Chemical mapping of a 177-nucleotide RNA with DMS and 2A3.
For DMS, 1,441 sequencing reads were counted.
For 2A3 the reverse transcriptase was SuperScript II with manganese.
RNA sequence: GGGAACGACUCGAGUAGAGUCGAAAAGCCGGCCUGUCCCGCACCCGGCCCAAGGAACGGCGUCGUGGUGGCUAUUCCGACUCGAGUGGGUGAUCAUCCUUAGGCUCGUGCGCUUGGUCGACCGCCGUACGGUGGUCGUCUUCGGACGACCACCGUAAAAAGAAACAACAACAACAAC
Reactivity to DMS in 0.01 (KOAc 150mM, MgCl2 10mM, bicine 150mM(pH8.5), 24C), signal-to-noise 1, nucleotides 027 to 126: g020c020c040g030g000c060c040u000g010u010c050c090c050g010c000a070c070c030c020g000g000c030c010c050a100a120g030g000a140a080c080g020g020c100g040u000c060g000u000g000g060u010g010g010c090u010a130u000u000c040c040g010a060c020u010c040g020a100g000u010g010g010g010u010g000a080u000c120a100u010c000c020u000u010a090g000g010c010u000c080g000u010g000c020g000c050u010u000g040g000u000c010g010a070c050c070g000c060c040g030
Reactivity to 2A3 in 0.01 (KOAc 150mM, MgCl2 10mM, bicine 150mM(pH8.5), 24C), signal-to-noise 1, nucleotides 027 to 126: g040c000c000g040g020c000c020u050g060u030c000c040c000g040c010a020c000c000c070g020g010c000c040c010a060a060g110g000a080a060c040g060g030c040g010u040c040g070u070g090g020u060g030g020c000u000a070u120u000c030c080g030a060c040u000c040g040a000g020u070g000g070g020u040g000a130u100c060a040u000c040c000u020u060a050g000g050c040u010c100g070u130g000c040g010c060u090u080g030g000u000c020g010a040c010c020g070c060c020g040